The record gives the reactivity of an RNA of 177 nucleotides to DMS.
The RNA was probed in 150 mM KOAc, 10 mM MgCl2 and 150 mM bicine (pH 8.5) at 24 C.
For DMS, 947 sequencing reads were counted.
Source: RMDB library OK2TST, as collected in RNAgym.
For DMS the reverse transcriptase was MarathonRT.

[RMDB]
RNA sequence: GGGAACGACUCGAGUAGAGUCGAAAACGAGGUCUGCGUUGGCGGGGAUAUUUUCAAAAGAAAGCUCGAAUGGCGGCGCCAAGAUGCAGCGAUGAACAGGGAUCUGGGCGUCGGUUAAAACGAUGUCGGCAGUUACAAUUUUCGAAUUGUAACUGCCAAAAGAAACAACAACAACAAC
Reactivity to DMS in 0.01 (KOAc 150mM, MgCl2 10mM, bicine 150mM(pH8.5), 24C), signal-to-noise 1, nucleotides 027 to 126: c080g000a090g010g010u010c040u010g000c130g020u000u010g010g000c050g030g010g000g020a170u000a050u000u010u000u000c070a090a080a120a200g000a060a080a110g060c080u000c030g000a100a120u010g010g020c000g000g010c030g020c010c010a050a050g020a060u010g000c030a020g070c070g030a110u000g020a090a110c100a100g010g000g000a130u010c030u000g000g020g020c020g020u000c000g030g000u020u010a020a080a060a160c050g000a020u000g000u000c090